Conditions: 150 mM KOAc, 10 mM MgCl2 and 150 mM bicine (pH 8.5), 24 C. An RNA of 207 nucleotides, treated with 2A3 and DMS and read out base by base.
RNA sequence: GGGAACGACUCGAGUAGAGUCGAAAAAUCGCUGCGUGCAGGGUUGCGAUGCAAGUGGCUAAAUCAAGCGACUCGCGGUUGUCGUAGGGUGUCCCCUCCCGACAAUGAUCGUUAAAACCAAAUAAGACGACUACACACGUAGAACUUGUAGUGGAGGCAGUAUGAUAGUCUUCGGACUAUCAUACUGAAAAGAAACAACAACAACAAC
Reactivity to 2A3 in 0.01 (KOAc 150mM, MgCl2 10mM, bicine 150mM(pH8.5), 24C), signal-to-noise 3, nucleotides 027 to 156: a000u090c030g010c000u020g000c010g060u050g030c050a090g060g060g040u120u070g020c040g040a040u020g030c030a060a080g040u050g100g000c000u110a120a140a160u170c080a090a050g040c020g030a020c010u020c040g040c000g050g010u040u030g030u020c030g010u050a080g000g050g040u080g070u060c020c000c000c000u020c020c030c000g010a010c010a020a080u140g020a100u020c030g020u060u090a030a060a070a140c030c030a070a090a050u130a070a030g060a030c040g020a010c010u040a020c090a010c030a010c080g020u020a010g050a120a040c040u040u070g040u120a050g020u090g110g010a020g000g010
Reactivity to DMS in 0.01 (KOAc 150mM, MgCl2 10mM, bicine 150mM(pH8.5), 24C), signal-to-noise 2, nucleotides 027 to 156: a080u000c060g000c020u000g030c020g040u020g000c040a110g000g040g060u000u000g010c030g000a140u000g030c030a030a070g010u000g030g020c000u010a090a080a050u000c070a090a140g020c020g000a060c060u000c020g010c000g000g040u010u000g010u000c040g070u000a080g010g020g000u010g000u000c030c030c010c030u000c000c030c010g050a040c030a040a070u010g010a080u000c020g000u000u000a040a070a130a300c120c050a040a020a110u000a070a130g000a070c000g000a100c000u000a070c020a080c050a060c070g000u000a090g020a080a090c030u010u000g020u000a070g050u010g030g010a160g000g010
As a SHAPE reagent, 2A3 marks flexible, mostly unpaired nucleotides at the ribose 2'-OH.